RNA sequence: GGGAACGACUCGAGUAGAGUCGAAAAGGGAUCUUCGGAUCCCAUUAACCGUAGGUGCGAUAAGAGUGAGGAGUUCAACAGCAAGUUUCGAAAGAGACUUGACAUGAACCCUCACUCUUUUGACGCACCUAAACGGGCAGCCUGGCUUCGGCCAGAAAGCUUUUCAAAAGUUCGCUUUUGAAAAGCUAAAAGAAACAACAACAACAAC
Reactivity to DMS in 0.01 (KOAc 150mM, MgCl2 10mM, bicine 150mM(pH8.5), 24C), signal-to-noise 2, nucleotides 027 to 156: g000g000g040a020u000c070u010u000c300g040g000a020u010c010c000c010a020u000u010a020a030c000c010g000u010a000g010g010u000g080c000g010a240u000a040a010g040a040g060u000g030a010g000g030a180g040u000u000c000a020a070c110a200g000c000a010a020g020u000u000u000c020g000a200a170a300g010a040g010a010c010u000u000g010a080c020a300u000g000a030a040c010c000c000u000c000a000c000u010c000u000u000u000u000g000a300c090g010c000a010c010c000u000a000a040a070c060g000g000g000c060a130g040c140c000u000g020g000c010u000u000c300g020g000c040c000a040g000a070a140
Reactivity to 2A3 in 0.01 (KOAc 150mM, MgCl2 10mM, bicine 150mM(pH8.5), 24C), signal-to-noise 1, nucleotides 027 to 156: g000g010g040a000u000c010u030u090c300g080g010a000u000c000c000c000a020u020u080a030a030c020c000g000u000a000g000g000u000g020c000g010a030u020a100a010g000a010g000u000g000a020g030g040a240g080u010u020c030a100a090c020a110g090c010a000a000g000u000u000u020c030g030a090a140a050g010a060g000a000c010u010u010g110a160c020a060u010g000a000a000c010c000c000u000c000a000c000u000c000u000u010u030u010g020a000c010g000c000a000c000c000u010a020a030a010c010g000g040g010c020a070g000c000c040u000g000g010c030u090u110c300g160g000c000c010a010g060a080a070
Source: RMDB library RNAMAK, as collected in RNAgym. Chemical mapping of a 207-nucleotide RNA with DMS and 2A3. For 2A3 the reverse transcriptase was SuperScript II with manganese. The RNA was probed in 150 mM KOAc, 10 mM MgCl2 and 150 mM bicine (pH 8.5) at 24 C.